This 177-nucleotide RNA was probed chemically with 2A3 and DMS. It was measured as part of the RMDB library OK1LIB. Reactivities are rounded to 0.1 and cut off at 0 and 3. For 2A3, 14,665 sequencing reads were counted. 2A3 adducts were read by reverse transcription with SuperScript II with manganese.
RNA sequence: GGGAACGACUCGAGUAGAGUCGAAAACGCUGCCGUGGGCGACGACACCGAUGCCGACGGUGGCGGCGCGGAUCGCGGCCGCGUCAUUGGAGCCGUCGCCGACCAUUGCGCACACCCGGCCGCUGUGUACUUAUGCCUAAUUCGUUAGGCAUAAGUAAAAAGAAACAACAACAACAAC
Reactivity to 2A3 in 0.01 (KOAc 150mM, MgCl2 10mM, bicine 150mM(pH8.5), 24C), signal-to-noise 8, nucleotides 027 to 126: c040g010c020u030g030c030c020g020u080g080g000g020c000g000a010c010g000a010c010a020c060c010g010a020u050g010c020c020g140a300c010g100g010u050g160g010c010g020g000c080g030c090g160g040a210u060c020g000c020g080g000c000c000g000c000g000u010c010a010u010u050g020g010a020g010c020c000g000u020c000g000c010c000g030a030c010c020a060u080u210g020c030g000c010a010c010a030c020c000c000g020g000c030c030g030c060u060g030u030g040
Reactivity to DMS in 0.01 (KOAc 150mM, MgCl2 10mM, bicine 150mM(pH8.5), 24C), signal-to-noise 4, nucleotides 027 to 126: c050g000c000u010g010c130c110g010u000g010g000g020c000g010a040c040g000a060c030a080c040c020g000a040u010g000c050c010g000a090c010g020g020u000g000g030c000g000g010c040g010c170g010g020a150u010c040g010c010g000g000c000c020g000c000g000u000c020a010u000u000g000g000a080g010c020c020g010u010c020g000c000c000g000a020c020c070a120u010u010g010c020g030c070a120c130a130c030c010c010g010g000c030c050g010c020u020g000u010g000